[RMDB]
RNA sequence: GGGAACGACUCGAGUAGAGUCGAAAAGACAAGUCAUCUAUGAGGCUUGAAUUAACGGUUUCAGUCUGUUGGGUAUAACCUGGGCUAGCCAAGGGAUUUAGGAACAAAGCAAGCUCCGUGGGUAGAGGGUGCAUUCUAAUUUCGAUUAGAAUGCACCAAAAGAAACAACAACAACAAC
Reactivity to DMS in 0.01 (KOAc 150mM, MgCl2 10mM, bicine 150mM(pH8.5), 24C), signal-to-noise 3, nucleotides 027 to 126: g000a230c070a050a050g010u010c040a070u000c080u020a080u000g010a100g000g000c010u000u000g000a070a120u010u000a090a120c210g010g010u000u010u000c070a040g000u020c020u000g010u010u000g010g010g030u010a070u010a100a070c050c060u000g000g010g020c130u000a090g030c020c020a020a130g000g000g000a070u000u000u010a100g020g010a040a050c070a040a150a080g020c050a040a070g010c020u000c050c050g020u000g010g010g020u000a070g020a100g030
Reactivity to 2A3 in 0.01 (KOAc 150mM, MgCl2 10mM, bicine 150mM(pH8.5), 24C), signal-to-noise 2, nucleotides 027 to 126: g040a040c040a050a040g000u050c010a080u030c180u180a100u180g070a050g050g060c030u010u030g040a030a020u110u070a110a040c060g020g000u000u070u070c020a010g050u010c010u010g250u130u080g040g030g010u120a090u040a190a030c020c030u070g010g080g000c010u010a010g020c010c030a030a020g060g010g000a000u020u120u110a070g010g030a040a040c030a110a120a000g030c020a020a000g000c020u010c060c020g020u040g050g000g000u060a080g030a050g160
An RNA of 177 nucleotides, treated with DMS and 2A3 and read out base by base. Conditions: 150 mM KOAc, 10 mM MgCl2 and 150 mM bicine (pH 8.5), 24 C. For DMS the reverse transcriptase was MarathonRT. The DMS profile rests on 2,659 reads. Reactivities are given for positions 27 through 126.